[RMDB]
RNA sequence: GGGAACGACUCGAGUAGAGUCGAAAACAGUCGGAUUCGUCCGACUGAAAAAAACCUUUGUGCACGACCAGGCUAGAAUGUUGGAUCCCAUUGGGAUCCACCGAAUUCUUGGACCCUGGUGCACUCUGGUAAAAAACCAGGGUUUCGACCCUGGUAAACUAUACUCCGGAUUCGUCCGGAGUAUAGUAAAAGAAACAACAACAACAAC
Reactivity to 2A3 in 0.01 (KOAc 150mM, MgCl2 10mM, bicine 150mM(pH8.5), 24C), signal-to-noise 1, nucleotides 027 to 156: c000a000g000u010c000g000g000a030u080u110c150g100u100c070c010g000a000c010u000g000a090a000a010a000a000a000a000c050c020u020u010u000g010u000g000c000a000c110g160a100c150c000a010g040g000c030u010a000g000a000a000u020g030u020u050g080g010a010u000c000c000c110a250u260u300g000g010g000a000u000c000c000a000c000c030g060a010a100u010u010c030u040u120g120g060a170c040c000c010u000g000g000u000g000c000a000c000u010c000u000g010g010u070a250a120a000a000a000a000c000c010a010g010g030g000u050u170u140c270g040a060c000c000c000u000g000g000u000a010a000